This 170-nucleotide RNA was probed chemically with DMS and 2A3. The 2A3 profile rests on 10,173 reads. The reactions ran in a buffer of 150 mM KOAc, 10 mM MgCl2 and 150 mM bicine (pH 8.5), at 24 C. It was measured as part of the RMDB library 15KLIB. For 2A3 the reverse transcriptase was SuperScript II with manganese. The DMS profile rests on 41,609 reads.

[RMDB]
RNA sequence: GGGAACGACUCGAGUAGAGUCGAAAACUAAAGGCAAAUAUGCCCAGAAUCUGCUUAAGAAGUUGAUUGGCGGUGAUGUCACUCCAGUUGACCAAUACAUGUGUGGCGUUGAUGGAAAACCCAUUAGAGACACUAACCUUCGGGUUAGUGAAAAGAAACAACAACAACAAC
Reactivity to DMS in 0.01 (KOAc 150mM, MgCl2 10mM, bicine 150mM(pH8.5), 24C), signal-to-noise 9, nucleotides 027 to 129: c060u000a030a100a050g020g000c050a040a120a120u050a070u010g000c020c000c050a220g020a070a080u030c050u060g000c050u020u010a110a070g000a030a020g000u000u000g050a040u060u000g030g040c170g020g080u050g000a140u040g040u000c030a060c000u030c040c090a080g000u000u000g020a050c050c050a030a090u080a110c090a110u070g040u050g010u050g030g000c110g000u030u040g030a070u040g010g000a070a060a070a090c060c010c010a110u020u030a070g000a090g020a130
Reactivity to 2A3 in 0.01 (KOAc 150mM, MgCl2 10mM, bicine 150mM(pH8.5), 24C), signal-to-noise 7, nucleotides 027 to 129: c040u110a180a000a000g050g000c020a030a110a100u230a150u190g010c020c000c000a010g030a030a050u020c030u090g020c000u150u070a110a020g090a100a030g120u040u040g020a050u000u020g040g020c070g000g060u070g050a170u190g090u130c000a000c020u010c010c010a020g000u010u000g040a040c010c010a040a100u100a110c060a100u120g060u030g010u030g100g020c030g030u020u040g030a050u030g010g000a030a000a040a060c010c000c000a020u040u130a040g040a000g030a040